[RMDB]
RNA sequence: GGGAACGACUCGAGUAGAGUCGAAAAGAUAUGGAUUUAUUAUAGCCCUACUAGGACUUUGAUCUCGGAAACGAGGGAGUCCAUAGGGAAUGUAGAAUCCUAAGUCAAAGCGCACUUCGGUGCGCAACUCCCUGAUUUACUUCGGUAAAUCAGGGAGAAAAGAAACAACAACAACAAC
Reactivity to DMS in 0.01 (KOAc 150mM, MgCl2 10mM, bicine 150mM(pH8.5), 24C), signal-to-noise 1, nucleotides 027 to 126: g010a020u000a300u000g030g020a000u020u000u000a020u010u020a090u000a110g000c010c000c000u000a010c260u000a170g040g000a010c000u000u000u000g030a160u020c000u000c000g000g000a060a010a270c010g010a030g000g000g000a030g010u000c000c000a210u000a000g010g030g010a060a020u000g000u000a040g000a010a030u000c000c000u010a120a210g020u000c010a050a100a220g000c000g000c000a020c000u000u010c200g030g000u010g010c000g000c010a020a050
Reactivity to 2A3 in 0.01 (KOAc 150mM, MgCl2 10mM, bicine 150mM(pH8.5), 24C), signal-to-noise 1, nucleotides 027 to 126: g030a050u060a090u160g030g020a040u040u070u050a250u200u040a050u230a250g070c000c000c000u020a050c060u130a200g010g010a010c030u290u270u100g080a080u080c000u000c010g090g040a130a080a060c020g010a010g060g000g000a010g030u000c000c000a010u000a000g020g030g000a020a000u090g010u030a030g090a100a010u000c030c000u010a150a030g040u050c040a100a080a030g020c030g000c000a010c010u030u170c300g070g000u020g000c030g000c000a010a000

The record gives the reactivity of an RNA of 177 nucleotides to DMS and 2A3.
The reactions ran in a buffer of 150 mM KOAc, 10 mM MgCl2 and 150 mM bicine (pH 8.5), at 24 C.
The 2A3 profile rests on 1,156 reads.